[RMDB]
RNA sequence: GGGAACGACUCGAGUAGAGUCGAAAAGAUAUGGACUUACGGAGGCGCACAGGACAACGUCGAAUGGUCGGAAACGACCAUUCGACGUUGAGAACCUGUGAACUACGCUUAAGUAAGUCCUAAGUCACAUAUAACUCCGGUUCGCCGGAGUUAUAUGAAAAGAAACAACAACAACAAC
Reactivity to DMS in 0.01 (KOAc 150mM, MgCl2 10mM, bicine 150mM(pH8.5), 24C), signal-to-noise 1, nucleotides 027 to 126: g020a040u000a300u000g010g000a000c000u010u010a010c020g010g080a130g000g020c040g030c010a020c020a010g020g000a150c030a030a010c010g060u000c010g000a000a020u000g020g010u000c000g020g010a130a070a270c040g030a010c000c000a000u010u010c050g010a030c010g010u010u000g010a060g010a160a200c010c000u000g000u050g000a060a090c170u010a220c010g010c000u000u010a110a200g000u000a020a020g000u000c000c000u000a000a120g010u000c010a280